[RMDB]
RNA sequence: GGGAACGACUCGAGUAGAGUCGAAAACUCUUGGAUGCAAAAUUUUAACGCUCACCCCACGCAACAAGUGGAGUGGCGUUUCUGACUUGUCCCUCAAACAAAAACUCCUUUACACCUUCUAUGGUAACAUUGUAAUUAUCUUCGGAUAAUUACAAUGAAAAGAAACAACAACAACAAC
Reactivity to DMS in 0.01 (KOAc 150mM, MgCl2 10mM, bicine 150mM(pH8.5), 24C), signal-to-noise 5, nucleotides 027 to 126: c050u000c060u010u010g020g010a070u000g010c030a030a060a090a130u000u000u010u000a030a030c010g010c000u020c020a020c010c000c000c000a010c010g000c180a110a060c280a070a120g000u000g000g000a020g020u000g010g010c020g000u000u000u000c040u010g000a080c110u000u010g010u000c020c010c030u010c100a080a070a070c130a050a040a050a090a070c110u010c040c040u000u000u000a100c130a070c040c010u000u000c110u000a070u010g000g020u000a080a220
Reactivity to 2A3 in 0.01 (KOAc 150mM, MgCl2 10mM, bicine 150mM(pH8.5), 24C), signal-to-noise 8, nucleotides 027 to 126: c020u020c020u060u110g060g030a040u070g020c020a060a100a170a200u080u130u070u080a040a020c010g000c030u120c080a010c010c010c030c000a000c010g060c030a070a290c040a270a080g000u000g010g000a010g000u000g000g000c000g000u000u000u000c010u010g050a040c010u020u050g030u040c010c010c000u020c040a130a150a100c030a020a100a030a020a030c040u060c020c010u060u080u060a080c060a030c020c010u120u130c060u160a070u190g010g000u010a010a010
Record summary
This 177-nucleotide RNA was probed chemically with DMS and 2A3. Values are in units of 0.01, from 0 to 300, in steps of 10. Values cover nucleotides 27 to 126. The 2A3 profile rests on 12,892 reads.